[RMDB]
RNA sequence: GGGAACGACUCGAGUAGAGUCGAAAAUGUAAUUGUUGCAGCAAGUGUCUCAGGGAAGUAGUUGCAUCCACACAGAAAAGGCAACCUUUUCGAGUUACAAUAGGCGAAACAGAGCGUACAACUAAAACACGAGGAUGCUAUUCGUAGCAUCCUCGUGAAAAGAAACAACAACAACAAC
Reactivity to 2A3 in 0.01 (KOAc 150mM, MgCl2 10mM, bicine 150mM(pH8.5), 24C), signal-to-noise 2, nucleotides 027 to 126: u200g010u080a060a070u110u020g030u040u050g080c100a070g020c030a200a080g030u020g050u090c000u030c070a110g050g000g000a030a030g000u070a000g010u060u010g000c020a070u070c130c000a070c030a030c020a060g060a120a080a000a000g070g000c060a040a010c020c000u000u020u010u010c030g000a020g010u100u070a020c040a100a070u110a090g210g020c010g000a050a000a000c010a020g100a000g010c040g060u050a060c030a120a020c060u110a010a090a150a000
Reactivity to DMS in 0.01 (KOAc 150mM, MgCl2 10mM, bicine 150mM(pH8.5), 24C), signal-to-noise 2, nucleotides 027 to 126: u010g010u020a000a130u030u010g030u000u000g000c100a110g010c120a100a100g000u030g010u000c030u000c020a070g020g020g000a030a020g000u030a150g020u000u000g000c060a040u000c110c100a160c160a100c150a120g000a000a020a040a090g030g030c090a040a140c040c020u000u000u020u020c000g010a120g000u030u030a020c120a030a130u000a170g030g030c060g000a070a020a060c030a070g010a050g000c060g020u090a080c140a010a060c000u020a040a100a060a110
An RNA of 177 nucleotides, treated with 2A3 and DMS and read out base by base.
The DMS profile rests on 2,498 reads.
For 2A3 the reverse transcriptase was SuperScript II with manganese.
Reactivities are given for positions 27 through 126.
The reactions ran in a buffer of 150 mM KOAc, 10 mM MgCl2 and 150 mM bicine (pH 8.5), at 24 C.